Source: RMDB library OK3TST, as collected in RNAgym. The record gives the reactivity of an RNA of 207 nucleotides to DMS and 2A3. For DMS, 3,180 sequencing reads were counted. In probing experiments dimethyl sulfate is read out at A N1 and C N3, which are open when not base-paired. The reactions ran in a buffer of 150 mM KOAc, 10 mM MgCl2 and 150 mM bicine (pH 8.5), at 24 C.
RNA sequence: GGGAACGACUCGAGUAGAGUCGAAAAAAGGACACAAUGCUGUUUGAAAAGAUGUCAUACAUUAGAAGGAAGAAUCCUAUUUCUGUUAUAUUUUAAUAAUCACAGUCACUCGCAAAUGGGUCAAGUGUAUCUUGACAUGAAACUUCUCAAACUGUCACAUUACCGUAGUGUUCGCACUACGGUAAUGAAAAGAAACAACAACAACAAC
Reactivity to DMS in 0.01 (KOAc 150mM, MgCl2 10mM, bicine 150mM(pH8.5), 24C), signal-to-noise 2, nucleotides 027 to 156: a100a040g050g020a120c050a050c050a080a130u000g020c010u000g000u000u000u000g020a060a060a090a130g010a100u010g030u000c010a130u000a120c030a080u000u000a070g030a090a060g010g000a160a060g000a110a080u010c060c100u000a170u000u000u000c030u020g000u000u000a090u010a120u000u020u020u000a060a090u000a070a090u000c030a030c040a080g020u000c030a060c000u000c030g020c040a070a080a100u000g020g020g000u000c030a050a110g020u000g030u010a070u000c080u000u000g010a030c000a060u000g000a160a030a140c060u010u000c010u000c030a060a070a090c030u010g020u000c010a170
Reactivity to 2A3 in 0.01 (KOAc 150mM, MgCl2 10mM, bicine 150mM(pH8.5), 24C), signal-to-noise 3, nucleotides 027 to 156: a010a000g130g020a050c050a020c040a100a090u160g050c040u050g060u060u020u050g040a030a030a000a020g040a010u060g000u000c020a020u010a040c000a020u080u140a050g100a180a040g070g020a020a120g060a150a100u080c010c000u090a090u040u030u060c010u010g020u000u030a130u020a170u110u140u070u080a170a210u190a100a010u070c020a020c010a020g050u040c030a010c110u070c040g080c040a010a030a200u120g020g020g000u050c020a030a040g030u020g020u030a040u040c080u020u050g000a000c000a000u020g040a050a070a030c000u020u040c000u010c000a040a050a030c030u080g060u140c050a010